An RNA of 177 nucleotides, treated with DMS and read out base by base.
RNA sequence: GGGAACGACUCGAGUAGAGUCGAAAAGAUAUGGACUCGCAACAGCGUAUUUCUACGAGGAUCUCGGAAACGAGGGAGUAGAAUACGACAUGCGAGUCCUAAGUCAAAAGGGGGCUUCGGCCCCCAACUAAGCAAAGAGGUUCGCCUCUUUGCUUAGAAAAGAAACAACAACAACAAC
Reactivity to DMS in 0.01 (KOAc 150mM, MgCl2 10mM, bicine 150mM(pH8.5), 24C), signal-to-noise 3, nucleotides 027 to 126: g010a030u000a300u000g000g000a010c000u000c000g010c000a050a090c270a150g010c010g010u000a010u000u010u000c000u000a000c000g010a130g030g000a020u000c010u010c000g010g000a110a110a200c000g010a010g010g000g010a030g020u010a000g000a020a020u000a000c000g000a010c080a200u000g000c000g010a010g000u000c000c000u000a000a060g010u010c020a090a080a130a130g000g010g010g010g010c010u000u010c180g030g000c000c000c000c000c000a000a020
Reactivities are given for positions 27 through 126. Conditions: 150 mM KOAc, 10 mM MgCl2 and 150 mM bicine (pH 8.5), 24 C.